[RMDB]
This 177-nucleotide RNA was probed chemically with DMS and 2A3. For 2A3, 3,756 sequencing reads were counted. The RNA was probed in 150 mM KOAc, 10 mM MgCl2 and 150 mM bicine (pH 8.5) at 24 C. The DMS profile rests on 3,262 reads. 2A3 adducts were read by reverse transcription with SuperScript II with manganese. The data come from the RNA Mapping Database (RMDB), library M2PK50.
RNA sequence: GGGAACGACUCGAGUAGAGUCGAAAACCGGUCACCUUCGGGUGACCGGAAAGAUACGUAGUCGUUGGUCACUAAUUACGGACAAUGGCAUAAUUAAAAUAAAAAUCAGUCCCUUCGGGGACUGAAAUCACUUAACCUAAUUCGUUAGGUUAAGUGAAAAAGAAACAACAACAACAAC
Reactivity to DMS in 0.01 (KOAc 150mM, MgCl2 10mM, bicine 150mM(pH8.5), 24C), signal-to-noise 3, nucleotides 027 to 126: c000c000g000g000u000c000a010c000c000u000u010c230g040g030g020u000g000a000c000c000g010g000a000a020a080g020a130u010a060c180g010u010a100g010u000c000g030u010u000g010g000u000c040a080c130u010a080a060u000u010a130c210g010g010a040c010a020a030u000g010g000c010a130u010a040a070u010u010a050a060a070a130u010a040a080a080a080a110u000c000a010g010u000c000c000c010u010u010c210g020g000g010g000a010c000u000g000a010a040a070
Reactivity to 2A3 in 0.01 (KOAc 150mM, MgCl2 10mM, bicine 150mM(pH8.5), 24C), signal-to-noise 3, nucleotides 027 to 126: c000c000g000g000u000c010a000c000c000u040u070c220g150g000g000u020g000a000c010c010g010g000a010a010a010g010a020u200a070c080g070u080a040g030u060c010g010u000u020g120g070u070c000a020c140u120a140a230u220u160a080c140g010g000a010c020a000a030u010g010g010c020a050u070a150a050u300u190a100a110a060a040u170a040a110a000a000a020u020c000a010g000u000c030c000c000u000u040c170g010g000g000g000a000c000u000g000a000a010a010